[RMDB]
The record gives the reactivity of an RNA of 207 nucleotides to 2A3. The reactions ran in a buffer of 150 mM KOAc, 10 mM MgCl2 and 150 mM bicine (pH 8.5), at 24 C. The 2A3 profile rests on 3,019 reads.
RNA sequence: GGGAACGACUCGAGUAGAGUCGAAAACUCGUUGUCCGACUCCGUUAAGGGCAGCGGGUUAACCCCAACGGAUGCGCUAGACAGUUCUCUCUGGUGGGCUGUUUAGCAAAGACUCGACCAGAGCAUCCUACUGUUCGGGAUAAGGAACAGUCCCCGCCUUGCUUUAACUGUUCGCAGUUAAAGCAAGAAAAGAAACAACAACAACAAC
Reactivity to 2A3 in 0.01 (KOAc 150mM, MgCl2 10mM, bicine 150mM(pH8.5), 24C), signal-to-noise 2, nucleotides 027 to 156: c000u010c000g000u020u010g010u010c000c010g020a010c020u000c020c000g020u000u020a030a020g000g010g000c000a000g000c020g020g000g000u000u100a060a070c050c030c010c030a020a000c000g000g000a000u000g010c000g000c010u000a000g000a010c000a010g000u020u000c050u000c000u000c010u000g010g000u010g010g010g010c000u000g010u000u000u000a000g010c000a000a000a000g010a000c060u040c300g110a010c010c000a000g010a000g000c010a100u050c000c020u020a100c000u010g000u000u000c010g000g000g040a090u110a230a030g070g000a010a000c000a000g010u010c000c000c000c000g010c020